[RMDB]
RNA sequence: GGGAACGACUCGAGUAGAGUCGAAAAUAGACGGGAGUACCAGAAUCUUUGGCUGGCUGCUUUCUCCACCCUGCCAGGCAAUACCCGUGACCCCUCUUGGGCAGCUAUCCUACAGGGGCUGGAGGAACAAUCGUCCCUGAUUCGUCAGGGACGAUUGAAAAGAAACAACAACAACAAC
Reactivity to DMS in 0.01 (KOAc 150mM, MgCl2 10mM, bicine 150mM(pH8.5), 24C), signal-to-noise 3, nucleotides 027 to 126: u000a060g020a090c040g000g000g000a160g010u020a150c050c050a060g000a090a060u070c060u000u010u000g030g000c010u000g030g000c110u010g030c140u020u010u020c020u000c020c060a080c070c070c030u020g030c030c060a050g010g050c060a050a120u010a080c040c000c030g000u010g000a170c120c010c020c160u000c070u000u040g020g000g020c080a040g000c130u020a040u020c010c000u010a110c200a060g000g020g020g030c090u020g000g030a070g000g010a050a120
Reactivity to 2A3 in 0.01 (KOAc 150mM, MgCl2 10mM, bicine 150mM(pH8.5), 24C), signal-to-noise 2, nucleotides 027 to 126: u130a010g080a030c010g020g010g000a050g130u090a090c020c070a070g130a130a160u100c090u100u140u090g060g060c000u010g010g000c010u030g020c010u070u040u030c020u000c020c000a020c010c000c010u030g030c000c040a010g030g000c020a010a050u040a110c030c010c010g020u030g090a210c050c010c010c000u030c070u100u220g010g040g000c010a030g010c050u100a130u190c020c010u040a060c050a080g000g020g000g000c040u010g020g000a030g000g010a010a030